Notes: The record gives the reactivity of an RNA of 177 nucleotides to 2A3 and DMS. 2A3 adducts were read by reverse transcription with SuperScript II with manganese.
[RMDB]
RNA sequence: GGGAACGACUCGAGUAGAGUCGAAAAGAUAUGGAGGCAUGACAUGCUAACGGAUCGGAAACGAUCCGCUAGCAACAGCAUGCUCCUAAGUCAAAGGUAGUAGCAUCGUUCGCGAUGCUACUACCAACAAUAAGACAUUCUUCGGAAUGUCUUAUUGAAAAGAAACAACAACAACAAC
Reactivity to 2A3 in 0.01 (KOAc 150mM, MgCl2 10mM, bicine 150mM(pH8.5), 24C), signal-to-noise 7, nucleotides 027 to 126: g030a010u080a050u190g020g000a040g060g270c010a000u000g030a220c030a080u070g010c000u000a010a000c000g000g000a000u000c000g030g020a070a040a040c010g000a000u000c000c000g000c000u000a000g000c010a010a010c010a010g030c000a000u000g010c000u010c000c000u050a160a030g060u050c070a150a040a080g010g000u010a000g010u000a000g010c010a010u010c020g060u090u080c300g010c010g100a000u000g000c000u000a000c000u000a000c000c000a000a000
Reactivity to DMS in 0.01 (KOAc 150mM, MgCl2 10mM, bicine 150mM(pH8.5), 24C), signal-to-noise 9, nucleotides 027 to 126: g010a040u000a300u000g000g010a030g020g020c000a000u000g010a050c080a220u000g010c000u000a000a010c000g000g010a000u000c000g010g000a090a080a190c010g000a000u000c000c000g010c010u000a000g010c000a010a040c220a170g000c010a010u000g010c000u000c000c000u000a050a160g010u000c030a080a110a120g000g010u000a000g010u000a000g000c000a000u000c000g010u000u010c240g020c010g010a000u000g000c010u000a000c000u000a000c000c000a030a030